[RMDB]
RNA sequence: GGGAACGACUCGAGUAGAGUCGAAAAGGCUGCGUAUCACUCUAGGGUACGUGAUAGUGCGAUAUAAGAAGCACUGGUACAUGCCGGCAGGGACAGUUAAGAGCUGGCCGCAGUCUCGUGUCCCUGCAAAAGGAGUUCUCGUUCGCGAGAACUCCAAGGUGUAUAGACGGUUCGCCGUCUAUACACCAAAAGAAACAACAACAACAAC
Reactivity to DMS in 0.01 (KOAc 150mM, MgCl2 10mM, bicine 150mM(pH8.5), 24C), signal-to-noise 1, nucleotides 027 to 156: g030g040c000u020g030c020g020u020a070u000c020a100c090u010c060u020a220g010g040g040u000a000c030g000u000g110a110u000a010g010u000g000c000g020a120u000a180u000a180a210g000a260a300g000c000a020c020u000g010g030u010a030c090a100u010g000c020c020g020g020c010a030g000g000g000a000c000a160g000u010u010a110a180g010a110g000c080u020g020g010c110c100g010c030a050g000u000c000u000c010g050u020g000u010c000c000c010u000g000c040a000a020a060a050g000g000a100g030u000u000c010u010c000g020u000u000c250g030c060g000a020g000a020a020c030u000c010c000a000a070
Reactivity to 2A3 in 0.01 (KOAc 150mM, MgCl2 10mM, bicine 150mM(pH8.5), 24C), signal-to-noise 4, nucleotides 027 to 156: g000g000c020u000g000c020g010u030a000u020c030a070c230u180c190u220a160g030g040g010u020a000c020g000u010g020a060u090a030g000u010g000c040g040a040u040a010u050a300a090g120a120a020g030c000a000c010u000g000g050u100a080c060a070u160g000c010c020g010g000c010a010g020g000g000a000c000a020g020u100u190a150a020g050a000g010c010u030g090g090c050c040g130c070a010g090u100c010u010c020g020u020g000u000c010c000c000u000g010c000a010a010a000a020g000g000a000g000u000u000c000u000c000g050u100u050c220g000c010g100a000g000a000a000c000u000c000c000a000a040